[RMDB]
RNA sequence: GGGAACGACUCGAGUAGAGUCGAAAAUAUGCACGCCGGUGCAGGUGAGUACGCGUGUAUGGCGUUCGUGACACCCACGAGCUUUUCGCUGUCGCGCGCUGUUUCAAGUGUCGCGCUGCGCUAUAGAAGUCGCAGGUGCAUUCGUGCAUCUGUGGCUAAAAGAAACAACAACAACAAC
Reactivity to DMS in 0.01 (KOAc 150mM, MgCl2 10mM, bicine 150mM(pH8.5), 24C), signal-to-noise 9, nucleotides 027 to 126: u030a040u010g010c040a020c020g010c030c100g020g030u010g000c000a040g010g030u020g010a180g000u030a080c100g010c020g010u000g010u010a040u030g000g000c030g010u000u000c010g000u000g000a110c130a120c050c070c010a080c110g000a070g000c050u010u010u010u010c020g010c000u000g000u040c020g010c010g000c030g000c030u000g010u010u040u030c170a110a040g010u000g000u040c010g000c010g000c020u000g000c000g010c130u010a070u030a060g000a140
Reactivity to 2A3 in 0.01 (KOAc 150mM, MgCl2 10mM, bicine 150mM(pH8.5), 24C), signal-to-noise 9, nucleotides 027 to 126: u150a020u020g010c010a000c010g010c010c040g100g010u020g000c000a010g040g070u080g030a090g010u050a020c010g000c010g010u010g010u020a020u040g040g010c040g010u010u010c010g000u020g030a050c030a070c050c020c000a010c020g020a010g020c000u040u050u030u050c010g000c010u030g050u120c020g000c000g000c010g000c020u010g050u040u150u120c050a050a020g010u010g110u170c010g000c000g000c010u010g000c010g000c010u070a070u030a140g110a080

This 177-nucleotide RNA was probed chemically with DMS and 2A3. The data come from the RNA Mapping Database (RMDB), library OK1LIB. For DMS the reverse transcriptase was MarathonRT. Values are in units of 0.01, from 0 to 300, in steps of 10. In probing experiments dimethyl sulfate is read out at A N1 and C N3, which are open when not base-paired. Conditions: 150 mM KOAc, 10 mM MgCl2 and 150 mM bicine (pH 8.5), 24 C.